[RMDB]
RNA sequence: GGGAACGACUCGAGUAGAGUCGAAAAGUCAUUAUGUUCGCAUAAUGACAAAUAUAUGGGACUAUAUAAAACCUGAUAGCCGUCGAAGAUCAUGUAUCGGCAAAAACAGACGAUUCGUCGUCUGUAACACUUUGCUCAAGUUCGCUUGAGCAAAGUGAAAAGAAACAACAACAACAAC
Reactivity to 2A3 in 0.01 (KOAc 150mM, MgCl2 10mM, bicine 150mM(pH8.5), 24C), signal-to-noise 2, nucleotides 027 to 126: g000u010c010a010u020u000a010u000g020u030u070c190g000c100a000u010a020a010u010g000a000c010a020a110a000u090a000u000a040u050g020g000g090a010c040u010a020u030a020u040a190a120a030a020c000c000u020g070a080u070a040g000c020c010g030u000c020g080a130a030g040a220u130c040a060u260g090u130a050u040c010g000g000c030a010a030a140a030a000c010a000g000a000c010g010a020u040u040c190g070u000c000g020u000c120u000g000u000a010a000
Reactivity to DMS in 0.01 (KOAc 150mM, MgCl2 10mM, bicine 150mM(pH8.5), 24C), signal-to-noise 2, nucleotides 027 to 126: g000u000c000a020u000u000a000u000g000u000u010c220g020c000a000u010a000a000u000g000a000c020a070a100a040u000a080u000a020u000g010g020g020a190c090u000a020u000a060u000a030a040a080a150c010c010u000g000a230u000a060g000c010c020g000u010c030g000a080a130g000a070u020c110a030u020g010u000a060u000c010g020g030c070a050a040a050a120a000c000a000g010a000c010g000a000u000u000c170g000u000c000g000u000c000u000g000u000a050a090